[RMDB]
RNA sequence: GGGAACGACUCGAGUAGAGUCGAAAACGAGGACUCCAAGCCACGGGACGCCGAGUGGACAACUGUCUUCAAGAACACGUCGGGCUGCCUGAGGUGUGGACCAGACCUGGUGCUAAAGCCCACAUGCGGCACUUAUGAGUUUCGACUCAUAAGUGCCAAAAGAAACAACAACAACAAC
Reactivity to DMS in 0.01 (KOAc 150mM, MgCl2 10mM, bicine 150mM(pH8.5), 24C), signal-to-noise 1, nucleotides 027 to 126: c070g040a020g020g000a190c090u020c020c010a010a300g020c000c010a090c040g060g040g020a080c070g000c010c000g000a130g000u000g000g030a150c030a150a090c150u010g010u020c140u000u000c110a030a100g020a040a220c030a010c040g000u010c010g020g040g000c010u000g000c040c010u000g000a020g050g000u000g020u010g010g010a070c110c090a160g020a070c050c020u000g000g040u000g000c050u010a060a130a140g000c000c000c000a190c140a100u000g040c300
Reactivity to 2A3 in 0.01 (KOAc 150mM, MgCl2 10mM, bicine 150mM(pH8.5), 24C), signal-to-noise 2, nucleotides 027 to 126: c060g030a010g000g040a030c040u080c080c000a050a050g000c010c000a030c040g020g040g000a020c000g000c020c030g050a050g020u070g010g040a090c030a120a090c130u140g020u130c090u290u150c080a080a010g070a090a030c030a000c080g300u110c120g090g030g000c120u120g000c000c010u040g010a050g050g020u020g020u040g090g040a040c060c030a020g030a080c030c030u030g110g000u060g020c080u150a080a090a090g000c000c010c000a070c020a080u110g000c000